Chemical mapping of a 177-nucleotide RNA with DMS and 2A3. For DMS the reverse transcriptase was MarathonRT.
[RMDB]
RNA sequence: GGGAACGACUCGAGUAGAGUCGAAAAGAUAUGGACGUAGCUUUUGACGAAGAGGAGUCGGAAACGACUCUCUCUUCGAUAAGCUGCGUCCUAAGUCAAGGCGACGAUCUGUUCGCAGAUCGUCGAAGCCAUAUCACAUCUUCGGAUGUGAUAUGGCAAAAGAAACAACAACAACAAC
Reactivity to DMS in 0.01 (KOAc 150mM, MgCl2 10mM, bicine 150mM(pH8.5), 24C), signal-to-noise 2, nucleotides 027 to 126: g010a050u010a300u010g000g000a010c000g020u000a000g020c000u000u000u000u020g040a190c130g010a020a020g010a020g010g000a020g000u000c000g010g000a080a060a180c000g000a020c000u000c000u000c010u000c000u010u000c000g000a080u000a010a000g010c000u000g000c000g000u000c010c000u010a000a050g010u000c030a130a180g000g010c020g000a010c010g000a000u010c000u000g000u000u010c180g020c010a010g000a000u000c000g000u000c010g000a020a110
Reactivity to 2A3 in 0.01 (KOAc 150mM, MgCl2 10mM, bicine 150mM(pH8.5), 24C), signal-to-noise 2, nucleotides 027 to 126: g030a010u060a030u100g000g000a000c010g010u020a000g000c000u070u110u160u260g260a200c120g000a010a000g010a010g010g000a000g000u010c010g050g020a070a030a010c010g000a000c010u000c000u000c000u000c000u000u000c010g000a000u000a000a000g010c000u010g010c000g000u000c000c010u000a000a000g010u000c020a020a070g190g070c010g000a010c010g000a000u000c000u020g060u080u110c280g000c130a000g010a020u000c000g000u000c000g000a010a000